[RMDB]
RNA sequence: GGGAACGACUCGAGUAGAGUCGAAAACUGACUAGGUUCGCCUAGUCAGAAAUAAAAGGAGCAUAAGCAUGAGCUCCUAAAAAUCAUGCAAGACGAAAGUCAAAACUCGUUACUUCGGUAACGAGAACAUCAAGCUAAAGUUCGCUUUAGCUUGAUGAAAAGAAACAACAACAACAAC
Reactivity to DMS in 0.01 (KOAc 150mM, MgCl2 10mM, bicine 150mM(pH8.5), 24C), signal-to-noise 4, nucleotides 027 to 126: c000u000g000a010c000u010a000g000g020u000u010c240g020c000c000u000a000g010u000c000a000g000a050a100a070u010a060a080a130a150g000g000a000g010c010a180u000a130a140g020c000a000u010g010a060g000c010u000c000c000u020a010a020a010a010a020u000c010a010u000g010c010a150a110g000a000c010g000a090a070a150g010u000c010a090a040a120a150c010u000c000g000u000u000a010c010u000u010c200g020g010u000a000a000c000g000a000g000a070a120
Reactivity to 2A3 in 0.01 (KOAc 150mM, MgCl2 10mM, bicine 150mM(pH8.5), 24C), signal-to-noise 5, nucleotides 027 to 126: c000u000g000a000c000u000a000g000g030u030u030c160g070c050c000u010a000g000u000c000a010g000a000a010a000u180a010a150a030a070g010g000a010g000c020a030u060a290a020g010c010a010u050g010a010g000c010u000c000c000u010a000a020a000a000a000u030c000a000u010g000c020a060a050g010a010c020g040a120a020a010g010u020c000a020a020a020a130c000u000c000g000u000u000a010c010u010u050c230g100g000u000a000a000c000g000a000g000a000a010
The record gives the reactivity of an RNA of 177 nucleotides to DMS and 2A3. Conditions: 150 mM KOAc, 10 mM MgCl2 and 150 mM bicine (pH 8.5), 24 C.